[RMDB]
RNA sequence: GGGAACGACUCGAGUAGAGUCGAAAAGGGGUGCAGAAUUAUUAUAGACCUCCGGUCGUAAAGGAGUUAGUGGACACAUUCUUUUCUACAUACAUUGACGCUGGGAGAAUGUGUGAAAUGAUUGGGGCAUCUAUUGGCGUUUCGACGCCAAUAGAUGAAAAGAAACAACAACAACAAC
Reactivity to DMS in 0.01 (KOAc 150mM, MgCl2 10mM, bicine 150mM(pH8.5), 24C), signal-to-noise 4, nucleotides 027 to 126: g000g030g010g020u010g020c060a060g000a100a060u010u000a100u000u000a090u010a140g000a070c100c010u000c070c050g020g020u000c080g000u000a050a070a110g000g000a080g010u010u000a100g020u000g010g010a070c020a020c020a030u000u000c010u000u000u010u010c030u000a090c070a100u000a100c150a140u010u010g000a120c180g030c160u010g000g000g000a030g000a020a000u000g020u000g010u010g010a060a050a090u000g010a090u000u010g010g010g010g020
Reactivity to 2A3 in 0.01 (KOAc 150mM, MgCl2 10mM, bicine 150mM(pH8.5), 24C), signal-to-noise 2, nucleotides 027 to 126: g090g030g000g000u050g060c030a010g060a160a050u160u110a030u100u030a070u190a210g060a050c000c000u050c020c040g020g030u050c050g040u090a030a090a100g060g020a040g040u110u140a090g030u190g150g010a000c020a000c000a050u000u000c000u020u030u020u050c000u010a080c010a100u140a000c030a050u090u140g080a030c120g090c110u040g010g000g000a030g020a030a000u020g020u000g020u010g040a010a000a060u210g040a040u010u100g010g000g000g020
Background: Source: RMDB library OK2TST, as collected in RNAgym. This 177-nucleotide RNA was probed chemically with DMS and 2A3. DMS adducts were read by reverse transcription with MarathonRT. Reactivities are given for positions 27 through 126.